[RMDB]
RNA sequence: GGGAACGACUCGAGUAGAGUCGAAAAGAGAGGGUAACCACCGCCGCGCGUCACUGAUAUAUCCACCGGGGGGUAAGGGGAGAAAAGGAUACAGCGCGACGAAGUUAGCACGCUGCCCCGUAAGGCUUGAAGAGUGUAGUGUUCGCACUACACUCAAGAUUUAUUUCCAGUUCGCUGGAAAUAAAUCAAAAGAAACAACAACAACAAC
Reactivity to 2A3 in 0.01 (KOAc 150mM, MgCl2 10mM, bicine 150mM(pH8.5), 24C), signal-to-noise 4, nucleotides 027 to 156: g060a000g030a030g020g040g040u070a060a070c030c020a060c070c030g010c000c010g000c000g000c000g040u060c040a020c120u060g070a060u110a020u030a030u220c030c040a080c070c080g000g030g030g000g030g020u060a080a060g030g050g020g000a040g050a010a080a020a010g040g000a020u060a090c050a020g000c000g000c000g010a010c020g010a070a020g050u070u080a020g030c040a010c100g030c040u050g060c020c000c000c010g000u040a040a040g050g000c070u110u130g070a150a090g010a060g000u000g000u000a000g000u000g020u030u020c060g020c030a000c000u000a000c000a000c000u000c000a000a000
Reactivity to DMS in 0.01 (KOAc 150mM, MgCl2 10mM, bicine 150mM(pH8.5), 24C), signal-to-noise 2, nucleotides 027 to 156: g000a110g020a100g000g010g020u000a060a110c030c030a120c080c000g010c000c020g050c030g020c030g040u000c110a120c050u000g000a090u000a080u000a110u000c030c040a140c060c020g000g000g000g000g000g000u000a020a080g000g000g010g000a120g000a040a120a120a120g010g050a130u010a050c030a110g020c000g040c010g020a070c020g030a060a120g010u000u010a130g030c050a060c020g010c020u000g010c010c020c000c030g020u000a050a090g020g000c030u000u010g010a170a180g000a030g020u000g030u000a000g030u000g040u000u010c300g010c010a010c000u000a000c000a000c000u000c000a000a060